[RMDB]
RNA sequence: GGGAACGACUCGAGUAGAGUCGAAAAGGCGAAGAGCUUGCCAGUGAGCCAGUCACAGUCAAAACUCCACCGAGAGAUGUGUCUUGUGAAUGUGAUCAUGGUUGCGCAUUUGAAAUGAAUGAAGAUGCGCGAUGCAACAAUUCGUUGUUGCAUCGCGAAAAGAAACAACAACAACAAC
Reactivity to 2A3 in 0.01 (KOAc 150mM, MgCl2 10mM, bicine 150mM(pH8.5), 24C), signal-to-noise 1, nucleotides 027 to 126: g050g050c020g060a080a040g040a060g080c000u090u080g010c050c020a040g070u050g110a000g140c020c010a000g000u000c000a020c020a000g050u040c000a000a030a030a190c010u050c050c000a290c210c100g120a200g000a000g000a300u160g080u010g050u060c030u080u080g030u000g050a000a050u070g010u070g020a040u000c000a070u040g000g010u000u110g000c010g000c000a080u040u000u120g100a160a140a040u070g070a140a110u070g040a000a030g090a030u120g020
Reactivity to DMS in 0.01 (KOAc 150mM, MgCl2 10mM, bicine 150mM(pH8.5), 24C), signal-to-noise 2, nucleotides 027 to 126: g000g030c010g000a070a110g000a200g000c070u010u000g010c010c010a110g000u000g000a030g020c010c050a030g000u020c010a000c010a000g000u000c020a060a040a080a100c010u010c000c040a160c210c140g000a140g010a100g000a050u000g000u010g000u000c060u000u030g020u000g000a040a030u000g000u000g010a040u000c080a070u000g010g010u000u000g000c060g000c030a040u010u000u000g000a160a080a170u010g000a110a010u000g000a170a050g010a050u010g010

Structure probing data (2A3 and DMS) for a 177-nucleotide construct. The data come from the RNA Mapping Database (RMDB), library OK2TST. For DMS, 1,299 sequencing reads were counted. For 2A3, 792 sequencing reads were counted.